[RMDB]
RNA sequence: GGGAACGACUCGAGUAGAGUCGAAAAGAUAUGGACAGUUCUGUGAGGGCAUUACGCUAGAGAGUAGAGUCGGAAACGACUCCACUCUCUUGGACCGUAAUGCCCUCACAGAGACUGUCCUAAGUCACCAAAUAUGGUAGUUCGCUACCAUAUUUGGAAAAGAAACAACAACAACAAC
Reactivity to DMS in 0.01 (KOAc 150mM, MgCl2 10mM, bicine 150mM(pH8.5), 24C), signal-to-noise 2, nucleotides 027 to 126: g020a040u010a300u000g010g010a020c010a030g010u010u000c010u010g000u000g010a010g020g000g010c000a020u000u010a010c000g010c020u010a010g020a030g030a050g050u010a060g010a010g010u000c000g020g010a050a100a240c000g000a020c000u000c010c010a010c000u000c010u000c000u010u000g020g010a110c300c020g000u000a000a000u000g010c010c010c000u000c000a000c000a000g000a020g010a020c000u010g000u000c010c000u000a010a070g010u000c050a300
This 177-nucleotide RNA was probed chemically with DMS. The RNA was probed in 150 mM KOAc, 10 mM MgCl2 and 150 mM bicine (pH 8.5) at 24 C. For DMS the reverse transcriptase was MarathonRT. Reactivities are rounded to 0.1 and cut off at 0 and 3.